Structure probing data (2A3 and DMS) for a 177-nucleotide construct.
[RMDB]
RNA sequence: GGGAACGACUCGAGUAGAGUCGAAAAGAUAUGGAAAAGAGCUUGGACCUGUACCAUCGGAAACGAUGGACAGCUAGCUCUCUUCCUAAGUCAAACAGCUUGAACUGGUUCGCCAGUUCAAGCUGAACGUUGUAGAGCUGUUCGCAGCUCUACAACGAAAAGAAACAACAACAACAAC
Reactivity to 2A3 in 0.01 (KOAc 150mM, MgCl2 10mM, bicine 150mM(pH8.5), 24C), signal-to-noise 2, nucleotides 027 to 126: g020a000u070a000u140g000g000a020a000a000a050g010a010g000c040u160u220g150g130a300c020c000u050g040u220a300c040c000a000u000c000g000g000a040a040a040c000g000a010u000g000g000a000c000a010g060c000u010a010g000c000u040c000u030c000u020u000c000c000u000a080a000g060u000c000a000a150a180c000a020g000c000u010u000g000a000a000c000u000g000g120u070u140c270g090c150c000a000g000u000u000c000a000a000g000c030u000g000a000a000
Reactivity to DMS in 0.01 (KOAc 150mM, MgCl2 10mM, bicine 150mM(pH8.5), 24C), signal-to-noise 1, nucleotides 027 to 126: g000a040u000a240u010g000g010a000a000a030a000g000a000g020c000u000u010g080g010a170c300c020u000g000u000a130c000c010a000u010c010g010g000a030a040a060c000g000a000u000g000g030a010c000a000g000c020u000a020g020c000u000c010u000c010u000u040c000c000u000a020a140g010u010c000a150a080a300c000a030g000c000u000u000g000a000a000c000u010g000g000u010u030c200g010c020c000a030g000u000u000c000a000a000g000c000u010g000a020a060

For 2A3, 2,589 sequencing reads were counted.
The RNA was probed in 150 mM KOAc, 10 mM MgCl2 and 150 mM bicine (pH 8.5) at 24 C.
Values are in units of 0.01, from 0 to 300, in steps of 10.
2A3 adducts were read by reverse transcription with SuperScript II with manganese.
DMS adducts were read by reverse transcription with MarathonRT.